[RMDB]
RNA sequence: GGGAACGACUCGAGUAGAGUCGAAAAGGUGCGCCGCCUGCUGGCGCGGGCUCCGGAACUCGAAGAACUGGUCUACGCCCAGGCCGGCCUGACGAGCGCCGACGACCUGACCUCGCGCAUCGAGGCCUACCCGGUUGAUAUUCGUAUCAACCGGGUAAAAAGAAACAACAACAACAAC
Reactivity to DMS in 0.01 (KOAc 150mM, MgCl2 10mM, bicine 150mM(pH8.5), 24C), signal-to-noise 3, nucleotides 027 to 126: g000g020u010g010c010g040c020c030g030c020c010u000g000c020u000g010g010c040g020c170g000g000g030c020u010c060c020g010g010a030a260c020u000c120g010a130a230g000a050a250c020u000g000g000u010c110u000a130c220g010c040c050c020a140g000g010c000c000g000g040c050c120u000g010a090c030g000a180g000c160g010c010c030g000a110c090g010a110c010c010u010g010a060c030c030u000c050g010c200g010c170a160u000c010g000a030g010g000c020c010